[RMDB]
Chemical mapping of a 177-nucleotide RNA with 2A3 and DMS. Reactivities are rounded to 0.1 and cut off at 0 and 3. For DMS, 11,108 sequencing reads were counted. The data come from the RNA Mapping Database (RMDB), library M2PK50. The reactions ran in a buffer of 150 mM KOAc, 10 mM MgCl2 and 150 mM bicine (pH 8.5), at 24 C. As a SHAPE reagent, 2A3 marks flexible, mostly unpaired nucleotides at the ribose 2'-OH. Reactivities are given for positions 27 through 126.
RNA sequence: GGGAACGACUCGAGUAGAGUCGAAAACCGGAGUAGUUCGCUACUCCGGAAAUAAAUUCAGCGGUAAUUCGACCGCAAAUAUUACCGGUGAUGCGGUCGAAAAAACUGCCAAGUUCGCUUGGCAGAACAUCAAUUAGAUGUUCGCAUCUAAUUGAUGAAAAGAAACAACAACAACAAC
Reactivity to 2A3 in 0.01 (KOAc 150mM, MgCl2 10mM, bicine 150mM(pH8.5), 24C), signal-to-noise 5, nucleotides 027 to 126: c000c000g000g000a000g010u010a000g000u020u130c220g010c100u010a000c000u000c000c000g000g010a010a000a010u040a000a050a020u130u080c050a040g070c040g110g040u080a070a130u050u020c010g000a000c000c000g000c010a000a020a010u100a030u060u080a080c030c030g060g020u050g020a010u030g000c010g000g010u030c020g000a000a000a000a000a000a010c010u000g000c000c000a010a000g010u040u080c220g010c120u000u010g000g000c000a000g010a010a010
Reactivity to DMS in 0.01 (KOAc 150mM, MgCl2 10mM, bicine 150mM(pH8.5), 24C), signal-to-noise 6, nucleotides 027 to 126: c000c000g010g010a020g010u000a010g010u000u020c200g020c000u000a010c010u000c000c000g010g000a000a030a040u000a060a060a130u010u000c060a060g010c080g010g010u000a070a180u000u000c010g000a010c000c000g010c010a010a020a060u010a140u000u000a160c060c050g000g000u000g010a190u000g010c000g000g000u000c000g000a000a030a040a060a050a080c000u000g000c010c010a010a020g000u000u010c230g010c000u000u000g010g010c000a010g000a060a130